An RNA of 177 nucleotides, treated with DMS and 2A3 and read out base by base. The RNA was probed in 150 mM KOAc, 10 mM MgCl2 and 150 mM bicine (pH 8.5) at 24 C. For 2A3 the reverse transcriptase was SuperScript II with manganese. It was measured as part of the RMDB library OK2TST. Values cover nucleotides 27 to 126.
[RMDB]
RNA sequence: GGGAACGACUCGAGUAGAGUCGAAAAAUCGGUCUUGUUAUCCACGAAAGCCGCAUUGUAAUCGUCGAUGGCGCGUGAAUAGGCCUUGACGAAGGCUUCGGUCAGUGCGCGCUCAUCCGUGGCGUUACCUAUUUUAGGGAUUCGUCCCUAAAAUAGGAAAAGAAACAACAACAACAAC
Reactivity to DMS in 0.01 (KOAc 150mM, MgCl2 10mM, bicine 150mM(pH8.5), 24C), signal-to-noise 9, nucleotides 027 to 126: a080u010c070g010g010u010c080u010u000g010u010u000a090u000c020c010a030c020g000a060a090a080g010c020c010g010c080a040u000u000g020u010a110a100u000c020g010u000c030g010a020u000g010g010c010g010c050g020u000g010a120a130u010a110g010g010c000c000u000u000g000a040c080g010a040a080g010g010c030u000u010c110g030g010u000c040a080g020u000g010c010g010c100g000c000u010c070a060u010c070c070g030u000g000g010c220g000u000u010a110
Reactivity to 2A3 in 0.01 (KOAc 150mM, MgCl2 10mM, bicine 150mM(pH8.5), 24C), signal-to-noise 8, nucleotides 027 to 126: a000u100c060g030g050u020c020u050u050g030u110u100a050u060c010c000a010c020g020a060a020a000g000c010c000g000c010a020u010u100g110u160a150a150u050c010g010u010c030g030a040u170g010g010c140g000c040g260u110g110a160a130u110a180g050g000c010c000u000u020g020a020c030g030a030a020g000g000c000u050u050c100g040g020u030c010a010g010u000g020c010g010c000g000c010u030c040a070u020c030c020g030u020g010g000c010g030u050u080a080